[RMDB]
RNA sequence: GGGAACGACUCGAGUAGAGUCGAAAAGGUACUACUAUUCGUAGUAGUACCAAAAAACCUUUGUGCAUUUCGAGCACCGACUAGCCCAUUGGGCUAGGUCGAAGUGCCCAGACAGAAUGCACUCUGGUAAAAAUGACAACCCUUCGGGGUUGUCAAACAAUGCUAAUUAAUUCGUUAAUUAGCAUUGAAAAGAAACAACAACAACAAC
Reactivity to DMS in 0.01 (KOAc 150mM, MgCl2 10mM, bicine 150mM(pH8.5), 24C), signal-to-noise 2, nucleotides 027 to 156: g000g020u000a010c000u000a010c000u000a040u000u010c280g050u000a010g030u000a000g020u010a000c010c000a000a000a030a060a070a030c000c010u000u000u010g010u000g000c000a020u010u000u010c090g020a080g000c020a010c000c020g000a070c000u000a000g010c000c010c010a300u000u020g050g040g040c000u000a000g010g000u000c000g010a100a100g010u000g020c010c020c020a240g020a210c260a110g000a030a030u000g000c010a000c010u000c040u000g010g020u000a020a040a060a120a110u020g010a020c010a020a020c010c000c010u000u010c300g060g030g020g020u000u000g020u000c000a020a020a100
Reactivity to 2A3 in 0.01 (KOAc 150mM, MgCl2 10mM, bicine 150mM(pH8.5), 24C), signal-to-noise 3, nucleotides 027 to 156: g000g010u000a000c000u000a000c000u010a020u090u160c280g090u030a000g000u000a000g000u000a000c000c000a010a000a020a000a010a010c000c000u000u020u010g000u010g000c010a020u020u060u150c060g040a080g030c010a010c010c010g020a010c000u000a000g000c010c000c140a300u250u300g010g010g000c010u010a050g000g070u010c000g010a220a020g000u000g010c010c050c000a030g050a090c050a050g080a020a010u010g000c000a000c010u000c000u010g000g000u050a120a140a000a040a050u040g000a000c000a010a010c000c000c040u010u060c240g020g000g000g010u000u000g000u010c000a000a000a000

Structure probing data (DMS and 2A3) for a 207-nucleotide construct. The RNA was probed in 150 mM KOAc, 10 mM MgCl2 and 150 mM bicine (pH 8.5) at 24 C. The data come from the RNA Mapping Database (RMDB), library RNAMAK.